[RMDB]
Record summary
Chemical mapping of a 207-nucleotide RNA with DMS and 2A3. 2A3 adducts were read by reverse transcription with SuperScript II with manganese.
RNA sequence: GGGAACGACUCGAGUAGAGUCGAAAAAUACGCCGCCGAGUUGAUAUAAAUCCUGGCCAUGCAGAUCUCAGUGCUAAAGAAGCACAAGAUGUCAUCAUGGAGGUCGUUUUCCCAAAUGAAGUGGGAGCCAGAAUAUUGACAUCAGAGUCGCAAUUGACUUAUUCAUCGAAUUCGUUCGAUGAAUAAGAAAAGAAACAACAACAACAAC
Reactivity to DMS in 0.01 (KOAc 150mM, MgCl2 10mM, bicine 150mM(pH8.5), 24C), signal-to-noise 4, nucleotides 027 to 156: a100u000a060c050g000c010c040g020c020c000g020a100g020u010u000g020a130u000a110u000a090a070a100u010c010c000u000g030g020c050c070a090u000g010c060a080g010a050u010c050u010c050a090g020u010g030c010u000a030a080a080g030a140a080g020c020a010c020a060a060g020a040u000g020u010c060a060u010c090a120u000g010g000a120g040g020u000c030g000u000u000u000u000c010c010c010a060a030a150u010g020a070a090g030u000g010g030g010a070g000c000c020a060g020a070a060u000a070u000u000g030a040c010a040u000c020a140g000a090g010u000c020g030c020a070a260u000u000g010a300
Reactivity to 2A3 in 0.01 (KOAc 150mM, MgCl2 10mM, bicine 150mM(pH8.5), 24C), signal-to-noise 4, nucleotides 027 to 156: a000u090a030c050g020c010c020g000c030c020g050a050g040u060u050g070a050u050a010u020a120a170a020u050c000c010u010g030g000c030c020a050u080g020c010a020g020a100u030c050u030c100a040g020u050g040c010u030a090a050a060g130a100a010g060c000a000c010a020a010g020a010u030g010u020c010a060u020c010a010u120g060g030a030g010g040u060c020g020u030u040u060u060c010c000c000a050a090a020u160g020a060a020g040u040g010g000g000a010g000c000c000a020g030a040a010u050a030u040u090g020a010c010a040u050c060a050g010a020g080u030c020g000c060a050a120u080u050g000a000